[RMDB]
RNA sequence: GGGAACGACUCGAGUAGAGUCGAAAACCAUUGCACGUGAGUGCAAUGGAACCUGUGAACUACGGUUCACAGGAACCUCUGCUUCGGCAGAGGACCGGUACUUCGGUACCGGAGGCCAGCUACGGCUGGCCAGCGCACAUCUACGGAUGUGCGCACUAGAACUACGGUUCUAGAACCGCUGCACUGAUCUGUCCUUGGGUCAGGCGGGGGAAGGCAACUUCCCAGGGGGCAACCCCGAACCGCAGCAGCGACAUUCACAAGGAAUUACUCGCAAGUUCGCUUGCGAGAAAAGAAACAACAACAACAAC
Reactivity to 2A3 in 0.01 (KOAc 150mM, MgCl2 10mM, bicine 150mM(pH8.5), 24C), signal-to-noise 4, nucleotides 027 to 266: c000c000a000u000u010g000c000a010c030g100u150g210a190g010u000g010c000a000a000u000g010g000a000a020c000c000u000g000u000g000a000a000c000u030a010c270g080g010u000u000c000a000c000a000g000g000a010a010c000c000u000c000u000g010c000u050u070c240g140g000c000a000g000a000g010g000a000c000c000g000g000u010a000c000u030u080c230g090g010u000a000c000c000g000g000a020g010g000c000c010a000g010c000u030a040c200g150g000c000u000g000g000c010c000a000g010c010g000c000a000c000a010u000c010u040a040c300g140g000a010u000g000u000g000c000g000c000a000c000u000a000g010a000a000c010u040a010c250g100g000u000u000c000u000a010g020a110a030c060c040g000c000u000g000c010a000c060u000g000a000u000c000u000g020u000c000c000u000u000g000g000g000u010c000a020g050g000c000g000g000g000g000g000a000a000g020g000c050a090a090c060u000u000c000c010c010a010g010g000g000g010g000c020a050a080c010c000c010c010g000a020a000c000c000g000c010a030g000c000a000g010c010g050a050c060a120u300u280c110a020c000a030a000g020g010a010a010u200u300a080
Reactivity to DMS in 0.01 (KOAc 150mM, MgCl2 10mM, bicine 150mM(pH8.5), 24C), signal-to-noise 1, nucleotides 027 to 266: c000c000a000u000u010g000c000a000c000g020u020g000a160g000u000g000c000a010a030u000g000g000a050a110c010c000u000g030u000g010a000a020c000u010a110c240g010g000u000u010c000a000c000a000g000g000a130a080c030c000u000c020u000g000c000u020u020c300g000g000c000a020g000a000g000g000a040c010c010g000g010u000a010c010u010u010c210g000g020u010a000c010c010g000g010a080g000g020c000c000a010g000c010u020a180c180g010g000c010u000g000g010c000c000a030g000c020g000c000a010c000a000u000c000u000a150c240g000g010a010u000g020u020g000c000g000c010a060c010u010a020g000a020a000c010u020a030c240g090g010u000u000c000u010a020g000a230a100c300c060g000c000u000g000c010a300c000u000g000a000u000c000u010g000u000c000c010u000u000g010g000g010u000c000a000g010g020c000g010g010g010g000g000a020a000g010g000c160a130a190c000u010u000c010c000c000a160g000g020g000g000g000c190a090a190c040c000c000c000g000a010a110c020c030g020c010a100g000c020a020g000c000g010a040c150a020u010u010c250a010c000a020a010g000g000a030a040u000u000a140
Background
An RNA of 307 nucleotides, treated with 2A3 and DMS and read out base by base. The DMS profile rests on 4,887 reads. The data come from the RNA Mapping Database (RMDB), library POS240.